An RNA of 177 nucleotides, treated with 2A3 and DMS and read out base by base. Source: RMDB library OK2TRN, as collected in RNAgym. Conditions: 150 mM KOAc, 10 mM MgCl2 and 150 mM bicine (pH 8.5), 24 C.

RNA sequence: GGGAACGACUCGAGUAGAGUCGAAAAUGGGCUCCAUAUUUCCUGGAUGUGAUUAGGGCUAUGUGUGGCUUGUCUUCCUGUACCAACAAGUAAUAAUAGGAGCUUACACCAUGGCAUUCAAUUGGAGGCGAAACUAGUGUUUCGACACUAGUUUCGCAAAAGAAACAACAACAACAAC
Reactivity to 2A3 in 0.01 (KOAc 150mM, MgCl2 10mM, bicine 150mM(pH8.5), 24C), signal-to-noise 1, nucleotides 027 to 126: u070g010g000g040c000u020c010c000a020u030a100u110u030u000c020c010u010g010g080a060u060g090u050g110a120u050u200a120g060g010g060c000u020a040u010g200u020g010u060g050g040c090u000u010g000u020c010u070u060c010c010u010g000u050a130c010c020a080a030c040a100a120g060u110a090a180u080a120a050u040a100g020g000a000g000c000u040u020a000c000a000c000c000a000u010g020g000c090a080u110u020c070a140a110u060u110g120g010a020g040
Reactivity to DMS in 0.01 (KOAc 150mM, MgCl2 10mM, bicine 150mM(pH8.5), 24C), signal-to-noise 2, nucleotides 027 to 126: u020g010g060g010c010u000c010c010a090u000a020u000u010u000c010c000u000g010g020a070u020g010u000g010a100u010u020a090g000g010g000c010u000a020u000g010u000g010u000g010g010c160u010u000g020u000c040u000u000c020c020u010g000u000a090c090c090a070a130c270a080a090g020u000a070a120u030a090a110u010a080g010g000a070g010c030u000u000a040c050a050c040c010a020u000g010g010c040a110u000u010c090a050a120u010u000g000g020a120g000
For DMS the reverse transcriptase was MarathonRT.